[RMDB]
RNA sequence: GGGAACGACUCGAGUAGAGUCGAAAACAUUGUUCCUUCGAUGUGACAGUAAGGUAUACCCUUCCUACUUAACGUUGCUGCGGUGUUGGCUGCCUUUGUCCACCUAAUCACAUGGAAUGUCUAUGCACUCCUCACUAGGCUUCGGCCUAGUGAGGAGAAAAGAAACAACAACAACAAC
Reactivity to 2A3 in 0.01 (KOAc 150mM, MgCl2 10mM, bicine 150mM(pH8.5), 24C), signal-to-noise 1, nucleotides 027 to 126: c030a080u110u090g020u050u030c020c000u000u080c060g070a040u070g000u050g080a000c020a040g040u100a140a020g090g000u040a080u120a210c050c000c000u060u000c030c000u070a130c020u070u100a110a020c100g090u020u080g000c000u040g000c090g020g030u040g000u160u020g050g000c010u030g010c000c070u110u110u060g050u000c010c000a030c000c030u030a000a080u030c030a000c000a100u020g060g050a060a090u050g080u170c050u000a130u080g030c040a000
Reactivity to DMS in 0.01 (KOAc 150mM, MgCl2 10mM, bicine 150mM(pH8.5), 24C), signal-to-noise 1, nucleotides 027 to 126: c140a020u000u000g000u010u000c020c060u000u000c090g020a040u010g000u000g000a050c110a050g010u020a040a080g020g000u000a090u030a120c080c040c080u000u000c010c000u000a070c100u020u000a080a120c120g020u020u000g010c000u000g010c130g010g010u000g030u000u000g000g000c040u000g000c030c030u000u000u030g060u000c010c080a080c040c020u000a080a090u010c040a030c040a050u010g000g000a050a070u020g020u000c080u010a120u000g000c180a070
This 177-nucleotide RNA was probed chemically with 2A3 and DMS. The DMS profile rests on 1,027 reads. 2A3 adducts were read by reverse transcription with SuperScript II with manganese. The reactions ran in a buffer of 150 mM KOAc, 10 mM MgCl2 and 150 mM bicine (pH 8.5), at 24 C.